Description
This 207-nucleotide RNA was probed chemically with 2A3 and DMS. The data come from the RNA Mapping Database (RMDB), library M2RFPK. For 2A3, 3,183 sequencing reads were counted.

RNA sequence: GGGAACGACUCGAGUAGAGUCGAAAAUGCUGUCGUUGACAGCGCCCAACGCUUCACAACCUGAAAGAAGCGCCUGUUAUCAGGACGGUUGAUCCAUUUACCCGUGCAGACCUCUGCAAACACCGGGUUUAACAAGCAUCUUUCGAGAUGCUUGUAAGACAUAUUUACGCUUCGGCGUAAAUAUGUCAAAAGAAACAACAACAACAAC
Reactivity to 2A3 in 0.01 (KOAc 150mM, MgCl2 10mM, bicine 150mM(pH8.5), 24C), signal-to-noise 5, nucleotides 027 to 156: u090g010c000u000g010u010c090g300u080u300g010a000c000a010g000c000g020c000c000c010a030a010c010g000c000u000u000c030a030c020a090a020c000c010u000g000a000a010a000g000a010a000g010c020g020c000c000u160g040u230u150a180u300c030a010g010g010a010c010g020g000u000u010g010a050u060c020c020a030u070u060u190a020c010c000c020g060u040g010c010a020g080a260c040c190u200c020u090g000c000a030a090a000c090a010c050c030g010g000g000u000u010u040a030a010c000a000a000g000c000a000u000c000u020u130u170c190g070a030g000a010u000g000c000u000u000g010u000a000a030
Reactivity to DMS in 0.01 (KOAc 150mM, MgCl2 10mM, bicine 150mM(pH8.5), 24C), signal-to-noise 1, nucleotides 027 to 156: u010g010c020u000g020u010c000g000u010u010g000a050c000a030g040c020g000c070c010c010a160a070c010g000c010u000u000c020a240c010a060a130c030c050u010g030a180a190a280g000a050a020g010c020g020c040c070u000g000u010u000a200u020c000a020g000g000a100c030g010g020u030u000g020a250u000c060c100a210u000u000u010a040c030c000c010g010u000g000c000a140g010a150c140c130u030c090u000g000c030a100a070a140c030a100c100c020g000g030g010u000u000u010a070a070c000a030a000g000c010a020u000c000u000u010u000c300g000a000g020a010u000g010c000u000u000g010u000a040a240